Chemical mapping of a 177-nucleotide RNA with 2A3.
As a SHAPE reagent, 2A3 marks flexible, mostly unpaired nucleotides at the ribose 2'-OH.
For 2A3 the reverse transcriptase was SuperScript II with manganese.
The reactions ran in a buffer of 150 mM KOAc, 10 mM MgCl2 and 150 mM bicine (pH 8.5), at 24 C.
It was measured as part of the RMDB library RFM100.

[RMDB]
RNA sequence: GGGAACGACUCGAGUAGAGUCGAAAAUCUUCUCGGAGCGAUCUGAGGUUUUAAUGGAGAUAGCGGUUCCUGCGCAACCCAUUGAUCUUGUUACAUUCUUAAGAAUGACAAGGACGCUUUUAUAAAAACAACUUUGAGCUUUCGAGCUCAAAGUUGUAAAAGAAACAACAACAACAAC
Reactivity to 2A3 in 0.01 (KOAc 150mM, MgCl2 10mM, bicine 150mM(pH8.5), 24C), signal-to-noise 1, nucleotides 027 to 126: u000c000u010u000c010u010c000g040g020a010g000c010g010a150u000c030u060g020a050g080g000u000u010u070u160a040a090u040g020g000a090g040a110u050a060g000c070g000g010u100u060c060c030u050g000c030g000c000a030a020c000c000c000a020u040u080g000a000u000c000u000u020g030u030u000a080c040a010u000u000c000u060u230a190a170g000a000a000u000g000a050c020a080a000g000g020a080c030g090c000u130u060u080u000a300u110a110a160a000a020